An RNA of 177 nucleotides, treated with DMS and 2A3 and read out base by base.
RNA sequence: GGGAACGACUCGAGUAGAGUCGAAAACACAACAAGGAUGGGUUCUUGGCCCGGCAAGAAUUUCUGCAGCGGGUCGGGUCUGCAGAGGACGAGAGAUACAAAGAAUUGCGCCGGCAACAACUUGCUAGAUAUUUUACCCUUUCGAGGGUAAAAUAUCAAAAGAAACAACAACAACAAC
Reactivity to DMS in 0.01 (KOAc 150mM, MgCl2 10mM, bicine 150mM(pH8.5), 24C), signal-to-noise 2, nucleotides 027 to 126: c080a110c110a060a090c060a100a100g020g000a120u000g010g000g030u000u000c040u010u000g010g010c060c040c000g000g030c020a060a050g000a080a050u000u000u000c010u010g010c000a030g000c150g000g030g040u010c090g000g030g020u000c010u000g010c020a030g000a020g010g000a080c100g000a110g000a080g000a110u010a060c130a080a070a110g010a100a070u000u010g010c150g000c040c040g000g010c020a040a030c060a040a090c090u000u000g000c120u000a120
Reactivity to 2A3 in 0.01 (KOAc 150mM, MgCl2 10mM, bicine 150mM(pH8.5), 24C), signal-to-noise 1, nucleotides 027 to 126: c060a000c000a040a040c030a090a040g130g000a130u090g010g050g040u040u010c040u020u080g050g040c000c000c030g030g020c030a030a020g050a140a100u060u100u010c000u030g000c000a020g070c010g020g050g090u090c100g000g000g000u000c010u000g000c010a010g000a040g040g020a010c040g020a030g000a000g010a090u080a230c050a040a210a030g060a110a120u150u140g010c040g000c090c030g020g030c030a030a000c010a050a080c070u060u080g000c010u080a040
Background: It was measured as part of the RMDB library OK2TST. 2A3 adducts were read by reverse transcription with SuperScript II with manganese. The DMS profile rests on 1,288 reads. DMS adducts were read by reverse transcription with MarathonRT.